[RMDB]
This 177-nucleotide RNA was probed chemically with 2A3 and DMS.
RNA sequence: GGGAACGACUCGAGUAGAGUCGAAAAACACCAAAACUGAAAACGGAAGGCAAUCCUUCCACGACGAUACUUACUUUCCUUUGAUCGUCGUUACUACUGGCAUAGCCACAAAGGAGAACAAACAUGAUUACUCCUGAUUCUUCGGAAUCAGGAGUAAAAAAGAAACAACAACAACAAC
Reactivity to 2A3 in 0.01 (KOAc 150mM, MgCl2 10mM, bicine 150mM(pH8.5), 24C), signal-to-noise 6, nucleotides 027 to 126: a000c090a170c040c030a090a080a030a060c220u270g070a130a080a010a030c060g020g000a000a010g020g000c180a100a220u300c000c000u000u000c000c000a000c000g000a010c000g000a000u120a140c030u060u050a010c010u090u150u060c010c000u030u000u010g010a000u000c000g020u000c000g000u030u040a040c040u040a030c020u000g000g000c060a270u150a230g030c010c000a040c030a010a040a000g040g020a060g020a050a020c080a110a060a020c040a180u140g010a140
Reactivity to DMS in 0.01 (KOAc 150mM, MgCl2 10mM, bicine 150mM(pH8.5), 24C), signal-to-noise 3, nucleotides 027 to 126: a060c240a230c060c000a020a030a080a070c190u000g000a020a030a170a070c230g020g040a090a000g020g000c300a080a130u050c010c000u000u000c000c010a020c000g000a020c000g000a000u000a070c080u020u000a000c050u000u010u000c010c050u020u020u010g020a030u000c000g000u000c000g000u000u020a030c180u000a060c270u030g000g020c000a100u020a260g010c010c000a100c130a010a070a000g020g010a020g000a100a090c250a080a190a160c200a070u000g000a250

Values are in units of 0.01, from 0 to 300, in steps of 10. The data come from the RNA Mapping Database (RMDB), libraries RFM100 and RFMREP. As a SHAPE reagent, 2A3 marks flexible, mostly unpaired nucleotides at the ribose 2'-OH.